The record gives the reactivity of an RNA of 177 nucleotides to 2A3 and DMS. The DMS profile rests on 10,363 reads. For 2A3 the reverse transcriptase was SuperScript II with manganese. Conditions: 150 mM KOAc, 10 mM MgCl2 and 150 mM bicine (pH 8.5), 24 C.
RNA sequence: GGGAACGACUCGAGUAGAGUCGAAAAAGUCUACUUUUCGAAGUAGACUGUGCUCCCACUUGAUCGAGGUCUCACCGUGUCAUUGCCCACGACACUCGGCCGUAAUAGAUUGGUUCGCCAAUCUAAACCCCUAUUUAAACUUCGGUUUAAAUAGGGGAAAAGAAACAACAACAACAAC
Reactivity to 2A3 in 0.01 (KOAc 150mM, MgCl2 10mM, bicine 150mM(pH8.5), 24C), signal-to-noise 6, nucleotides 027 to 126: a010g000u000c000u000a010c000u050u030u030u150c200g080a010a000g000u000a000g000a010c000u000g010u050g030c030u030c000c010c000a030c050u090u200g070a120u100c080g060a040g040g050u020c030u030c090a100c080c050g010u020g010u030c040a080u010u240g090c030c010c010a030c050g020a010c010a010c030u040c010g040g010c020c020g010u020a070a080u020a050g000a000u010u000g010g020u020u030c190g020c050c000a000a000u010c010u000a050a020a020
Reactivity to DMS in 0.01 (KOAc 150mM, MgCl2 10mM, bicine 150mM(pH8.5), 24C), signal-to-noise 7, nucleotides 027 to 126: a010g010u000c000u000a000c000u000u000u000u020c140g010a020a010g020u000a000g000a010c000u000g000u010g020c190u000c010c000c000a140c190u010u000g010a070u000c080g010a080g010g000u000c020u000c090a110c180c100g000u000g010u000c030a260u000u000g000c050c030c040a140c160g010a050c040a040c020u010c080g000g000c020c030g010u010a100a130u010a010g000a010u000u000g000g000u000u010c240g010c010c000a000a000u000c000u000a000a090a210